[RMDB]
RNA sequence: GGGAACGACUCGAGUAGAGUCGAAAAUUAAUUCAUAGAGAUAGGCCAGGCUCGGUGGCUCACACCUGUAAUCCCAGCACUUUGGGAGGCCGAGACGGGUGGAUCACGUGAGGUCAGGAGUUAAAGAUACAGUCCAAUACUUCGGUAUUGGACUGUAAAAAGAAACAACAACAACAAC
Reactivity to DMS in 0.01 (KOAc 150mM, MgCl2 10mM, bicine 150mM(pH8.5), 24C), signal-to-noise 1, nucleotides 027 to 126: u000u000a080a090u000u000c070a070u020a160g000a100g000a110u000a090g000g010c020c030a080g000g010c070u000c030g020g000u000g000g010c060u000c060a080c090a030c020c040u010g000u000a090a110u000c010c010c010a030g000c160a050c140u000u000u000g020g000g010a040g020g010c070c050g000a070g000a030c030g000g010g010u000g020g000a050u000c050a030c000g000u000g010a110g020g020u000c020a060g020g000a090g020u000u000a060a060a100g000a090